[RMDB]
RNA sequence: GGGAACGACUCGAGUAGAGUCGAAAACCCGGAGAUGAGCGGAGAAACCACAUCCAGAGGACCCCUUCGACGAACAGAAGACCCUGGACCGGGAGGGAAUAGCCCAUAGUACAAGGGGAGAUGCUAGACACCAAUUGCUUCGGCAAUUGGAAAAGAAACAACAACAACAAC
Reactivity to DMS in 0.01 (KOAc 150mM, MgCl2 10mM, bicine 150mM(pH8.5), 24C), signal-to-noise 8, nucleotides 027 to 129: c030c010c030g020g010a060g050a040u000g000a050g000c020g070g020a090g040a090a100a130c090c070a080c110a070u000c030c050a070g040a090g020g000a100c180c080c090c030u000u000c000g030a050c130g000a100a040c110a060g020a050a040g030a000c070c030c020u040g040g030a060c080c080g010g010g000a050g000g020g000a000a010u030a040g050c000c000c000a060u060a080g000u050a030c110a040a050g040g000g020g030a050g000a060u040g040c050u050a090g030a120c200a130
Reactivity to 2A3 in 0.01 (KOAc 150mM, MgCl2 10mM, bicine 150mM(pH8.5), 24C), signal-to-noise 7, nucleotides 027 to 129: c010c000c020g020g030a050g000a060u120g010a040g020c060g000g010a040g050a100a060a030c030c020a060c030a070u050c030c020a020g030a040g040g020a060c010c000c010c030u050u060c030g080a090c040g050a140a010c020a090g040a020a000g040a050c000c000c030u040g010g000a020c030c030g000g000g000a010g010g000g010a030a020u050a050g000c000c010c010a060u110a020g050u070a040c070a090a040g000g010g020g000a010g000a000u060g010c040u060a040g010a050c030a010